Record summary:
Conditions: 150 mM KOAc, 10 mM MgCl2 and 150 mM bicine (pH 8.5), 24 C. This 177-nucleotide RNA was probed chemically with 2A3. Reactivities are rounded to 0.1 and cut off at 0 and 3. The 2A3 profile rests on 502 reads. It was measured as part of the RMDB library OK1LIB.
[RMDB]
RNA sequence: GGGAACGACUCGAGUAGAGUCGAAAAGACAUCAUGACCAUCGAAAAUGCUCUCGGGACAGUAUCUAGUAAUUCGACAGCGGCAACUCAAGCUAGCCCAUGCGUUUGGACGGCAUACUGCGUAGCUAAGGGUGCCGGACAUUCGUGUCCGGCACCCUAAAAGAAACAACAACAACAAC
Reactivity to 2A3 in 0.01 (KOAc 150mM, MgCl2 10mM, bicine 150mM(pH8.5), 24C), signal-to-noise 1, nucleotides 027 to 126: g000a030c060a120u000c000a030u120g130a090c000c000a090u030c030g000a070a000a000a110u140g000c020u000c000u010c000g050g000g000a000c030a110g080u060a060u040c000u000a000g080u150a170a200u200u070c050g010a040c000a020g000c020g000g000c000a030a040c210u060c140a010a010g050c000u000a090g000c000c020c030a060u120g010c060g130u010u080u000g000g000a000c000g000g010c000a080u060a190c000u050g030c040g140u000a010g050c050u000a060